RNA sequence: GGGAACGACUCGAGUAGAGUCGAAAAGAUGUCUUGGGUAAAUUUCGCGACUGGCUCAUCAAAGCGCUCUUUCAACUGUGGCAUCUGCGUGGUGAGGCCACGGUACGCGUAGUUUAGGUGGGUAACAUCGCGUACUGCAUUUCGAUGCAGUACGCGAAAAAGAAACAACAACAACAAC
Reactivity to DMS in 0.01 (KOAc 150mM, MgCl2 10mM, bicine 150mM(pH8.5), 24C), signal-to-noise 1, nucleotides 027 to 126: g000a060u000g000u000c040u000u000g000g000g000u000a060a100a150u000u010u000c050g000c010g010a120c100u000g010g000c020u030c020a040u000c050a040a140a190g030c010g010c010u000c020u010u010u010c160a130a100c120u010g020u020g010g020c060a020u000c010u000g000c060g010u000g010g010u000g000a090g000g000c030c040a030c040g030g020u000a070c070g000c030g030u000a120g010u000u010u000a090g020g030u000g000g010g010u000a080a110c110a090
Reactivity to 2A3 in 0.01 (KOAc 150mM, MgCl2 10mM, bicine 150mM(pH8.5), 24C), signal-to-noise 1, nucleotides 027 to 126: g020a070u160g070u100c030u150u090g000g000g050u130a150a200a110u020u050u050c060g010c000g130a080c070u080g040g050c000u000c000a020u000c010a050a040a020g000c030g000c010u000c120u090u280u120c120a190a020c020u020g000u010g020g040c000a020u050c030u090g030c040g100u170g050g130u050g010a020g010g020c010c000a030c000g010g010u090a050c000g030c020g030u050a110g030u010u090u040a060g000g000u040g000g000g000u030a040a120c010a080
Source information:
The data come from the RNA Mapping Database (RMDB), library OK2TRN. An RNA of 177 nucleotides, treated with DMS and 2A3 and read out base by base. Reactivities are rounded to 0.1 and cut off at 0 and 3. Conditions: 150 mM KOAc, 10 mM MgCl2 and 150 mM bicine (pH 8.5), 24 C. For DMS, 992 sequencing reads were counted. Reactivities are given for positions 27 through 126. DMS adducts were read by reverse transcription with MarathonRT. For 2A3 the reverse transcriptase was SuperScript II with manganese.